[RMDB]
RNA sequence: GGGAACGACUCGAGUAGAGUCGAAAAGUACGUAGAGUGUCGGCAAUCUCUAUAUAUGGACACUUACGAAGGGUUUUGGUUGUUUUGUAUCUCAAGCCGACUUUGAGUAUUUGAGGAAAAUACGACAUGAAUCCUGUGACGUUCGCGUCACAGGAAAACUACGAAUUGGAUUCGUCCAAUUCGUAGUAAAAGAAACAACAACAACAAC
Reactivity to 2A3 in 0.01 (KOAc 150mM, MgCl2 10mM, bicine 150mM(pH8.5), 24C), signal-to-noise 3, nucleotides 027 to 156: g090u070a010c040g010u000a010g010a000g100u010g020u020c020g030g090c040a150a200u020c040u010c050u110a070u020a030u040a030u200g090g000a030c030a010c070u030u100a030c070g030a060a040g040g070g000u000u040u130u160g020g000u000u020g020u000u050u040u020g050u030a120u020c050u010c070a020a030g020c000c000g040a040c060u060u040u090g100a100g010u020a010u010u020u070g030a050g000g120a010a040a030a000u080a060c020g040a020c020a050u130g060a080a040u000c000c000u000g000u020g000a000c010g010u060u080c250g010c010g110u000c000a000c000a010g000g000a000a000a040
Reactivity to DMS in 0.01 (KOAc 150mM, MgCl2 10mM, bicine 150mM(pH8.5), 24C), signal-to-noise 2, nucleotides 027 to 156: g030u000a030c040g030u000a020g000a030g020u000g010u000c020g030g010c050a110a190u000c030u000c030u000a050u000a070u000a070u010g010g010a110c050a030c050u000u010a130c090g010a110a080g000g000g000u000u000u000u000g010g020u000u000g000u000u000u000u010g000u000a070u000c050u000c050a090a150g000c000c010g000a040c030u010u000u010g020a230g030u000a020u000u000u000g010a180g030g000a160a040a050a030u000a070c000g010a150c080a040u010g000a090a170u000c000c000u000g040u000g000a030c020g020u000u000c290g020c030g020u000c000a000c000a030g000g000a000a000a020